[RMDB]
RNA sequence: GGGAACGACUCGAGUAGAGUCGAAAAUUCAGUGAAGACAAGGGGUUUCGGCCUUUUGAACGCACUGAUGCCCUGACGCUGCUUCAUUACGGAGCUGUGUCCGGGGCCCCGGUGGAUUUCGAUCCGCGAACUGGAUAUCGUUCGCGAUAUCCAGUUCAAAAGAAACAACAACAACAAC
Reactivity to 2A3 in 0.01 (KOAc 150mM, MgCl2 10mM, bicine 150mM(pH8.5), 24C), signal-to-noise 1, nucleotides 027 to 126: u040u000c010a010g000u020g010a000a000g060a060c000a000a020g000g030g030g000u030u050u120c230g230g000c000c010u020u010u000u000g020a030a000c030g020c020a010c010u000g000a010u020g000c000c000c020u000g020a010c010g020c040u020g020c010u070u010c050a180u220u300a110c220g030g000a000g000c010u030g020u010g000u010c060c150g020g000g000g000c000c000c000c010g000g010u070g000g000a040u040u090u120c200g040a020u010c000c010g010c070
Reactivity to DMS in 0.01 (KOAc 150mM, MgCl2 10mM, bicine 150mM(pH8.5), 24C), signal-to-noise 2, nucleotides 027 to 126: u000u000c010a030g020u000g000a030a010g000a300c000a020a000g000g000g000g020u000u000u010c140g020g000c000c000u000u000u000u000g000a020a300c300g000c000a000c020u010g010a010u000g000c000c000c000u010g000a010c000g020c000u000g000c000u000u000c000a140u010u030a270c160g010g000a010g000c000u000g000u000g000u010c050c100g030g000g000g000c010c020c000c020g000g030u000g010g000a050u000u000u010c150g010a080u000c010c000g040c080
The record gives the reactivity of an RNA of 177 nucleotides to 2A3 and DMS. DMS adducts were read by reverse transcription with MarathonRT.